[RMDB]
RNA sequence: GGGAACGACUCGAGUAGAGUCGAAAAGCGAUGCGCAACUCGGCAUUCGACGGUGCUGUACUCUCGUUGAAUGGCAGGGUGAGCCGGUCGAGUUCCUCGCGUAGUUCGGGCGCCAGGCCGUCCUCAAAAAUGACCGGAUAUUCGUAUCCGGUCAUUUAAAAGAAACAACAACAACAAC
Reactivity to 2A3 in 0.01 (KOAc 150mM, MgCl2 10mM, bicine 150mM(pH8.5), 24C), signal-to-noise 2, nucleotides 027 to 126: g000c020g030a040u130g120c020g040c080a060a020c020u020c000g030g030c000a020u090u080c030g050a020c030g060g070u120g000c140u150g130u230a100c030u000c040u040c060g020u010u060g070a180a130u120g070g040c040a070g060g000g030u070g030a020g040c020c010g060g000u010c000g010a020g010u050u060c000c000u030c030g000c000g020u040a050g020u050u130c050g000g000g010c020g000c050c020a080g000g100c040c020g030u030c020c010u150c010a110a170
Reactivity to DMS in 0.01 (KOAc 150mM, MgCl2 10mM, bicine 150mM(pH8.5), 24C), signal-to-noise 3, nucleotides 027 to 126: g010c040g000a040u000g010c100g030c100a120a050c060u010c020g020g010c020a110u000u000c050g020a080c060g010g000u000g000c100u010g000u010a120c080u000c020u000c110g020u000u000g010a060a050u020g010g030c040a030g000g000g000u000g010a090g010c050c060g010g010u000c010g000a080g000u000u000c020c000u000c070g010c030g010u010a090g020u000u000c020g010g010g000c050g010c040c080a060g000g000c050c010g020u000c000c010u030c110a020a060